[RMDB]
RNA sequence: GGGAACGACUCGAGUAGAGUCGAAAAUGAACGCUUUCGAAGGAAAGCUUGACCAGCUAAUCCUCUGCAACGCCAUUACGAGGACUGCCCUUAGAGGCUCAUGGCGAUAGGUCACCCCGCCGGUCGGUUAAGAAUCAGCGAUUCGUCGCUGAUUCAAACCUGACAUACCGUUCGCGGUAUGUCAGGUAAAAGAAACAACAACAACAAC
Reactivity to 2A3 in 0.01 (KOAc 150mM, MgCl2 10mM, bicine 150mM(pH8.5), 24C), signal-to-noise 1, nucleotides 027 to 156: u120g000a130a020c010g000c010u130u060u040c050g260a190a140g010g040a030a010a000g020c050u050u060g020a010c020c010a000g000c010u020a040a030u010c010c020u020c060u060g020c030a090a080c000g060c060c010a080u180u080a090c090g020a020g020g070a070c090u130g020c000c010c050u030u080a030g060a160g100g000c010u010c020a040u040g010g000c000g030a040u130a050g000g040u030c010a040c000c010c000c000g030c060c050g060g030u110c100g020g020u080u110a150a000g000a000a000u000c010a000g000c000g030a030u000u080c130g000u000c000g060c010u020g000a000u000u000c000a020a000